[RMDB]
RNA sequence: GGGAACGACUCGAGUAGAGUCGAAAAGAUAUGGAUCUGAACUACGAGCUUGAUCAGCAACAGCCAUUAUAAGCUCGGAAACGAGCUUAUAAUGGACAUGCUGGUUUGAGCUCGCAGAUCCUAAGUCCUUGCUAUAGUACUUCGGUACUAUAGCAAGAAAAGAAACAACAACAACAAC
Reactivity to 2A3 in 0.01 (KOAc 150mM, MgCl2 10mM, bicine 150mM(pH8.5), 24C), signal-to-noise 3, nucleotides 027 to 126: g060a020u130a110u280g010g000a010u000c010u010g030a140a190c110u170a050c300g000a000g000c000u000u020g010a000u030c000a000g000c000a030a090c050a260g110c010c000a000u010u010a010u000a010a010g020c000u010c000g000g000a030a050a010c010g000a000g000c010u000u010a000u000a000a000u000g000g020a000c000a030u030g000c000u010g020g060u050u130u300g020a010g000c000u020c000g010c000a010g000a000u010c010c000u010a110a010g030u010c000
Reactivity to DMS in 0.01 (KOAc 150mM, MgCl2 10mM, bicine 150mM(pH8.5), 24C), signal-to-noise 4, nucleotides 027 to 126: g000a110u010a270u010g000g000a020u000c000u000g010a160a090c200u010a300c030g010a010g000c010u000u010g000a000u000c000a000g010c000a040a070c300a190g000c020c000a010u000u010a010u000a000a040g020c000u010c000g020g010a070a090a290c000g030a020g000c000u000u000a000u000a010a010u000g000g010a020c090a120u000g010c000u000g000g010u000u000u000g010a000g010c000u000c010g010c010a010g030a020u000c000c000u010a040a110g010u000c040